[RMDB]
Description:
Source: RMDB library OK1LIB, as collected in RNAgym. Structure probing data (2A3) for a 177-nucleotide construct. Values cover nucleotides 27 to 126.
RNA sequence: GGGAACGACUCGAGUAGAGUCGAAAAAGGUUACUGCCGUCGAGCCCACCGACCAGGGCGCACGAGUGACGAUGAGCAUCGCCAGCAACUACAAAAUCCCCGUCGAUGCCUCGGCGAACGUGCAUUCGCACUCGGAGGGGUUCGCCCCUCCGAGUGCAAAAGAAACAACAACAACAAC
Reactivity to 2A3 in 0.01 (KOAc 150mM, MgCl2 10mM, bicine 150mM(pH8.5), 24C), signal-to-noise 2, nucleotides 027 to 126: a000g070g000u030u060a040c020u090g060c030c010g000u000c030g030a030g070c000c050c000a010c000c030g060a080c020c040a060g020g010g000c050g010c000a000c020g050a080g030u130g050a010c000g020a100u050g030a000g020c010a010u000c020g000c000c000a050g090c050a030a200c070u300a100c090a040a100a020a140u030c000c000c000c000g030u010c020g010a000u120g020c000c010u040c000g010g030c040g030a030a090c000g090u050g000c000a010u030u130c060